[RMDB]
RNA sequence: GGGAACGACUCGAGUAGAGUCGAAAAAGUCACCUAUUACGAUAGGCGACAUUUGAACCAGCGAACAAUUCAGUUGCGAGAUUCGAGGUUUCAGUCUGAAUCAUAGUAGCCAUUACGAUGGCUACAACUCACUCCCGACUGUUCGCAGUCGGGAGAACAAGAUCUUAUCCUUCGGGAUAAGAUCUUGAAAAGAAACAACAACAACAAC
Reactivity to 2A3 in 0.01 (KOAc 150mM, MgCl2 10mM, bicine 150mM(pH8.5), 24C), signal-to-noise 4, nucleotides 027 to 156: a010g020u010c010a020c010c000u000a000u020u070a060c190g040a020u010a010g000g000c000g000a000c010a040u120u040u130g080a040a020c010c010a020g190c000g000a000a000c010a050a120u010u020c000a010g000u000u000g010c000g010a000g000a010u000u000c000g000a010g030g040u150u230u300c030a020g130u030c010u000g000a020a010u050c030a040u080a080g000u000a000g000c000c000a000u050u060a060c230g150a020u010g000g020c000u000a000c000a000a010c020u100c040a070c000u000c000c000c000g010a000c000u020g040u090u090c230g020c100a000g000u000c010g000g000g000a000g000a000a000
Reactivity to DMS in 0.01 (KOAc 150mM, MgCl2 10mM, bicine 150mM(pH8.5), 24C), signal-to-noise 1, nucleotides 027 to 156: a100g000u010c000a050c010c010u000a050u010u000a080c220g060a090u010a000g030g030c000g050a020c000a100u000u020u000g000a110a220c000c010a160g010c030g060a080a050c020a130a090u000u010c050a120g020u000u000g000c020g000a110g000a060u000u000c020g040a180g000g020u000u020u000c070a060g010u000c050u010g000a050a040u000c120a110u000a140g030u010a040g000c000c010a000u010u010a200c210g010a060u010g010g010c010u000a010c010a030a040c060u010c060a060c010u010c000c000c000g000a020c010u010g030u000u000c290g060c050a020g000u000c010g000g010g020a000g020a000a080
Chemical mapping of a 207-nucleotide RNA with 2A3 and DMS. 2A3 adducts were read by reverse transcription with SuperScript II with manganese. The reactions ran in a buffer of 150 mM KOAc, 10 mM MgCl2 and 150 mM bicine (pH 8.5), at 24 C. The data come from the RNA Mapping Database (RMDB), library M2RFPK. Reactivities are given for positions 27 through 156. Values are in units of 0.01, from 0 to 300, in steps of 10.